[RMDB]
RNA sequence: GGGAACGACUCGAGUAGAGUCGAAAAACCGUUUCGUCCAGCCGGGGCCGGACGUCGUUUUGGUGUCUGAUUCGGUAACCGAAUCGGGAGCACCAUCUGCGUAGGCUUGUGGUUUAAGGCUUGCGCCGUGGUAUAAUACUUUCGAGUAUUAUACCACAAAAGAAACAACAACAACAAC
Reactivity to 2A3 in 0.01 (KOAc 150mM, MgCl2 10mM, bicine 150mM(pH8.5), 24C), signal-to-noise 9, nucleotides 027 to 126: a000c030c010g020u060u070u060c050g020u020c020c020a020g010c030c030g090g010g130g010c020c010g040g070a020c010g010u040c050g010u010u020u100u130g000g000u010g020u010c010u010g000a010u000u000c010g020g080u160a190a240c140c000g000a000a000u000c000g000g020g010a070g050c000a000c000c000a010u020c030u060g000c000g000u010a010g010g010c010u040u050g100u110g090g120u040u070u140a050a020g010g000c010u020u060g020c040g000c030c070
Reactivity to DMS in 0.01 (KOAc 150mM, MgCl2 10mM, bicine 150mM(pH8.5), 24C), signal-to-noise 9, nucleotides 027 to 126: a100c030c010g010u000u010u010c020g010u000c020c030a090g020c020c070g010g010g020g010c040c030g010g010a030c020g020u010c120g000u010u000u000u010g010g010u000g020u000c010u000g000a010u000u000c000g020g000u030a160a150c130c000g010a010a000u000c000g000g010g010a120g020c000a010c000c000a040u010c130u010g000c010g020u000a030g000g000c010u010u000g000u010g010g010u010u010u020a140a050g000g000c010u000u010g010c030g010c030c300